Background
This 177-nucleotide RNA was probed chemically with DMS and 2A3. DMS adducts were read by reverse transcription with MarathonRT. The data come from the RNA Mapping Database (RMDB), library OK2TST. 2A3 adducts were read by reverse transcription with SuperScript II with manganese.
RNA sequence: GGGAACGACUCGAGUAGAGUCGAAAAGAUCGCCGAGUGCAAAGGUACCACUGUGGUGGGCGGUGGUGAUUCGGUGGCGGCGGCGAAUGCCUUCGGUGUGGCCGACAAGAUGACCCACGUCUCCACCGACAGCUGGAUGAUUCGUCAUCCAGCUGUCAAAAGAAACAACAACAACAAC
Reactivity to DMS in 0.01 (KOAc 150mM, MgCl2 10mM, bicine 150mM(pH8.5), 24C), signal-to-noise 1, nucleotides 027 to 126: g030a100u010c010g030c000c010g040a040g020u000g000c040a070a080a120g000g010u020a080c000c000a030c030u000g020u000g050g010u000g000g010g000c020g020g010u000g000g000u010g000a070u000u000c000g020g040u000g000g010c060g000g010c040g000g010c020g010a070a040u010g010c120c010u000u020c100g060g020u020g030u000g010g000c010c010g010a070c160a110a090g030a120u000g000a130c300c020c000a120c050g020u000c050u010c010c010a000c050c090
Reactivity to 2A3 in 0.01 (KOAc 150mM, MgCl2 10mM, bicine 150mM(pH8.5), 24C), signal-to-noise 1, nucleotides 027 to 126: g020a080u050c000g000c030c000g000a040g040u220g000c060a020a140a050g050g030u070a060c020c000a030c000u070g040u110g050g000u030g010g050g010c040g090g000u030g020g000u030g010a070u070u100c030g080g020u040g060g010c040g000g000c030g020g000c040g050a040a000u110g080c000c000u080u050c120g100g050u090g010u080g140g010c000c020g010a040c030a110a050g070a040u050g030a020c000c030c000a020c020g040u030c030u000c040c000a010c000c000